[RMDB]
RNA sequence: GGGAACGACUCGAGUAGAGUCGAAAAGUUUGAUGCAGGCGGUGCAGGGCGCCCGCCGGUAGAUGCCGGACCGCCGCCGGGUCCGGCGCAGUCGAGCGUGAGGCAGCGGUCGCCUACCGGGGCGGUGGGCCAUUUAACGAUUCGUCGUUAAAUGGCCAAAAGAAACAACAACAACAAC
Reactivity to DMS in 0.01 (KOAc 150mM, MgCl2 10mM, bicine 150mM(pH8.5), 24C), signal-to-noise 1, nucleotides 027 to 126: g000u020u000u010g010a050u000g000c030a030g000g000c000g000g020u000g000c080a130g000g040g040c100g000c040c010c030g040c010c010g000g050u000a020g010a120u000g020c020c000g070g020a030c000c000g020c030c000g020c080c000g030g030g000u000c020c000g030g010c000g010c150a070g020u090c020g030a070g000c000g020u010g030a130g000g000c110a060g000c030g000g010u000c020g030c080c000u000a000c060c020g000g030g000g080c040g010g020u000g000
Reactivity to 2A3 in 0.01 (KOAc 150mM, MgCl2 10mM, bicine 150mM(pH8.5), 24C), signal-to-noise 2, nucleotides 027 to 126: g080u050u070u140g080a070u110g010c040a020g040g000c010g020g000u090g000c020a020g090g040g000c000g000c000c000c000g060c000c000g000g000u020a030g030a060u240g010c030c020g040g010a010c000c000g020c010c000g010c010c000g030g010g000u020c030c000g030g000c000g000c000a020g100u110c080g050a070g060c030g030u110g070a190g040g020c080a010g030c000g030g050u070c000g020c000c000u000a040c020c010g020g000g010g000c000g000g000u060g000